Record summary
An RNA of 177 nucleotides, treated with DMS and 2A3 and read out base by base. It was measured as part of the RMDB library OK2TST.
RNA sequence: GGGAACGACUCGAGUAGAGUCGAAAAGAUGGCCACACGAAAUAGUACAGCAUUACUAUCAUCGCCAUCCUGUGUACACCAUCUUAGCCGUCGCAUCAGCUGCUGUGGCGAUGAUGAUUGGCGUAACCCUAUCAAGCAUUUUCGAAUGCUUGAUAGGAAAAGAAACAACAACAACAAC
Reactivity to DMS in 0.01 (KOAc 150mM, MgCl2 10mM, bicine 150mM(pH8.5), 24C), signal-to-noise 9, nucleotides 027 to 126: g000a020u000g000g020c150c090a070c080a080c090g010a070a160a050u000a030g010u010a040c160a120g010c190a120u010u000a050c040u000a020u000c100a060u000c110g000c100c050a060u000c060c050u000g010u000g000u000a080c230a140c010c010a030u000c020u000u000a130g020c020c010g010u000c030g010c020a030u000c060a110g030c080u000g010c100u010g010u000g010g010c000g000a010u000g010a040u010g000a050u010u010g050g010c020g020u010a080a080c160
Reactivity to 2A3 in 0.01 (KOAc 150mM, MgCl2 10mM, bicine 150mM(pH8.5), 24C), signal-to-noise 9, nucleotides 027 to 126: g020a000u020g010g000c030c020a040c010a010c090g080a050a060a050u060a030g030u040a020c070a100g060c030a070u090u040a040c020u030a010u060c050a030u060c040g010c040c020a080u050c010c040u090g020u000g030u060a030c040a020c070c000a020u030c010u060u120a020g020c010c000g030u020c010g000c010a040u040c040a090g040c030u120g020c080u150g120u200g170g000c020g000a010u010g000a010u040g010a020u050u290g020g000c020g010u040a060a060c020